[RMDB]
The record gives the reactivity of an RNA of 177 nucleotides to 2A3 and DMS. The RNA was probed in 150 mM KOAc, 10 mM MgCl2 and 150 mM bicine (pH 8.5) at 24 C. In probing experiments dimethyl sulfate is read out at A N1 and C N3, which are open when not base-paired. DMS adducts were read by reverse transcription with MarathonRT.
RNA sequence: GGGAACGACUCGAGUAGAGUCGAAAACGACUUACCUUCGGGUAAGUCGACAUAGGUGAGUUCAUCGGAUAGCUGCCUAGGUGAGUUCAUCGGAUAGCUCCCACAUGUAACGGUUCGCCGUUACAAAUUAAUGCACUGUCUUCGGACAGUGCAUUAAAAAAGAAACAACAACAACAAC
Reactivity to 2A3 in 0.01 (KOAc 150mM, MgCl2 10mM, bicine 150mM(pH8.5), 24C), signal-to-noise 1, nucleotides 027 to 126: c010g000a000c000u000u000a000c000c020u020u070c260g070g000g010u000a000a000g030u010c000g030a000c000a090u150a050g000g000u020g010a020g010u000u020c000a010u040c030g120g060a040u130a100g080c110u130g030c050c000u060a090g000g070u020g040a040g000u020u020c030a000u000c010g020g030a140u180a040g000c030u030c020c030c000a040c000a070u060g020u000a000a000c010g020g040u000u050c190g030c050c000g030u010u000a000c000a010a010a000
Reactivity to DMS in 0.01 (KOAc 150mM, MgCl2 10mM, bicine 150mM(pH8.5), 24C), signal-to-noise 1, nucleotides 027 to 126: c000g000a020c000u000u000a010c000c000u000u030c230g030g000g000u000a000a000g000u000c000g010a010c100a030u010a130g010g000u000g000a040g030u000u000c050a000u000c020g000g020a160u000a130g000c120u010g000c010c010u010a130g010g020u000g020a020g010u000u000c030a010u000c030g030g000a120u000a050g000c150u000c010c000c000a150c220a110u010g000u000a000a010c000g000g000u000u010c240g000c000c000g010u000u000a020c000a020a050a090